Structure probing data (2A3) for a 177-nucleotide construct. It was measured as part of the RMDB library TTRDEL. The reactions ran in a buffer of 150 mM KOAc, 10 mM MgCl2 and 150 mM bicine (pH 8.5), at 24 C. Values cover nucleotides 27 to 126.

RNA sequence: GGGAACGACUCGAGUAGAGUCGAAAAGAUAUGGACGUCUGCCAACCUACGAACUACGCUCUCGGAAACGAGAGGCGCGUAGGGACGUAUAGACGUCCUAAGUCAAAGUGAUCGUUCGCGAUCACAACGAGUUACCUUUCUUCGGAAAGGUAACUCGAAAAGAAACAACAACAACAAC
Reactivity to 2A3 in 0.01 (KOAc 150mM, MgCl2 10mM, bicine 150mM(pH8.5), 24C), signal-to-noise 1, nucleotides 027 to 126: g010a020u030a030u150g000g000a010c000g020u000c020u050g060c050c020a030a030c030c000u030a000c000g080a130a030c070u170a060c300g000c040u020c000u000c020g000g130a080a030a050c020g010a000g000a060g070g060c050g070c010g010u000a000g010g010g000a000c030g000u030a220u180a190g010a000c000g000u000c000c000u010a050a000g040u000c030a090a000a090g000u020g000a020u000c010g050u130u070c290g010c000g060a000u020c000a000c000a000a020